[RMDB]
RNA sequence: GGGAACGACUCGAGUAGAGUCGAAAAGGUUUCAUGUUUGUGCUUCAGGAAACUCGUCACUAAGGCAGAAAUACCAAAUACGACUGCUAAUUCUAAAAGAAGAGAACCUUUAACCUCUUUUAGAUACCUCCACCUCUAUUUUCGAAUAGAGGUGGAGAAAAGAAACAACAACAACAAC
Reactivity to 2A3 in 0.01 (KOAc 150mM, MgCl2 10mM, bicine 150mM(pH8.5), 24C), signal-to-noise 3, nucleotides 027 to 126: g100g000u090u020u030c070a040u060g050u050u090u120g160u090g040c080u060u080c020a030g000g100a060a070a030c060u040c050g040u040c030a010c090u050a080a060g010g000c010a010g070a060a170a030u230a120c050c000a050a030a090u180a050c070g020a040c060u010g000c010u070a130a080u080u000c000u010a020a000a010a010g060a100a000g050a010g030a080a090c040c060u080u120u150a100a070c000c000u000c000u000u010u000u030a030g010a030u080a110c010
Reactivity to DMS in 0.01 (KOAc 150mM, MgCl2 10mM, bicine 150mM(pH8.5), 24C), signal-to-noise 2, nucleotides 027 to 126: g010g020u000u000u020c150a140u020g010u000u000u000g000u000g010c000u010u010c050a040g000g000a100a150a080c010u000c070g000u030c030a080c090u020a070a010g000g010c000a020g000a130a050a070u000a130c200c160a050a100a050u020a100c110g000a150c080u000g030c020u000a010a130u030u000c000u000a000a000a030a010g020a030a030g000a170g000a000a060c080c090u060u040u050a070a230c020c020u000c000u000u000u020u000a000g000a010u030a020c250